Notes
Structure probing data (DMS and 2A3) for a 177-nucleotide construct. For DMS, 3,375 sequencing reads were counted. The data come from the RNA Mapping Database (RMDB), library OK2TRN.
[RMDB]
RNA sequence: GGGAACGACUCGAGUAGAGUCGAAAAAACACGACGUGUCGAAUUAUCCAAGUUGCAGCGGCUGCCCCGGACGUUGGAUACAACACGACGAAUCGUAGUAACCACGCUGCGGCUGCGGCCCCGUACACUAAUGCCGUAGUUUCGACUACGGCAUUAGAAAAGAAACAACAACAACAAC
Reactivity to DMS in 0.01 (KOAc 150mM, MgCl2 10mM, bicine 150mM(pH8.5), 24C), signal-to-noise 4, nucleotides 027 to 126: a070a030c050a050c030g020a060c130g010u010g010u010c040g020a130a080u000u000a080u010c020c020a090a050g010u000u000g000c030a030g000c090g020g010c040u000g010c030c290c030c020g020g010a050c050g000u000u000g010g000a070u000a040c090a080a100c150a060c020g010a070c230g010a060a070u010c010g020u010a100g000u010a040a060c040c020a070c060g000c060u000g020c050g010g020c060u000g010c020g010g000c010c000c020c030g000u010a090c150a150
Reactivity to 2A3 in 0.01 (KOAc 150mM, MgCl2 10mM, bicine 150mM(pH8.5), 24C), signal-to-noise 1, nucleotides 027 to 126: a010a000c070a030c090g170a060c100g100u080g020u090c070g030a150a160u180u030a060u180c060c010a100a040g090u070u090g030c040a030g020c000g150g000c020u050g040c030c020c030c020g050g020a060c030g050u100u040g050g000a000u020a120c020a080a000c000a000c080g100a010c140g110a100a080u090c000g010u020a050g000u030a000a040c030c010a000c000g000c010u080g040c030g040g040c000u030g010c030g040g030c000c000c020c010g060u070a040c060a000